Conditions: 150 mM KOAc, 10 mM MgCl2 and 150 mM bicine (pH 8.5), 24 C. The record gives the reactivity of an RNA of 177 nucleotides to 2A3 and DMS. For 2A3, 3,942 sequencing reads were counted. It was measured as part of the RMDB library OK2TST. For DMS the reverse transcriptase was MarathonRT.
RNA sequence: GGGAACGACUCGAGUAGAGUCGAAAAGAGCAUCUGCAAACCGCAGGCCACACCCUGGCCGAAAAAAUGAUCGUGCCCGACGAUAUUUACCAAAUUCGGGCGGUGGUCUCCCGCUGGAUUGCCGAUGUCAUAAGUAGCGGUUCGCCGCUACUUAUGAAAAAGAAACAACAACAACAAC
Reactivity to 2A3 in 0.01 (KOAc 150mM, MgCl2 10mM, bicine 150mM(pH8.5), 24C), signal-to-noise 3, nucleotides 027 to 126: g070a040g000c000a010u000c000u030g010c020a010a020a060c000c020g000c030a030g000g010c000c030a040c000a040c030c050c020u030g100g000c030c040g080a070a020a000a000a000a000u210g020a020u010c010g020u050g010c000c020c010g020a010c000g010a010u030a110u180u170u160a170c060c050a030a060a170u070u030c000g000g010g020c000g010g000u080g000g000u010c030u020c030c060c040g000c080u190g010g020a050u010u020g000c010c010g020a010u030g010
Reactivity to DMS in 0.01 (KOAc 150mM, MgCl2 10mM, bicine 150mM(pH8.5), 24C), signal-to-noise 5, nucleotides 027 to 126: g020a180g000c000a010u000c020u000g010c010a010a020a060c020c030g030c040a080g010g000c140c080a040c160a140c120c050c070u000g000g010c040c020g010a000a020a080a050a050a040u010g000a010u000c010g020u000g010c020c010c010g000a120c130g000a050u000a040u010u000u010a120c170c150a040a110a220u010u000c030g000g000g020c010g010g020u000g020g000u000c080u000c060c050c060g000c030u010g040g010a070u000u000g020c020c060g000a020u010g000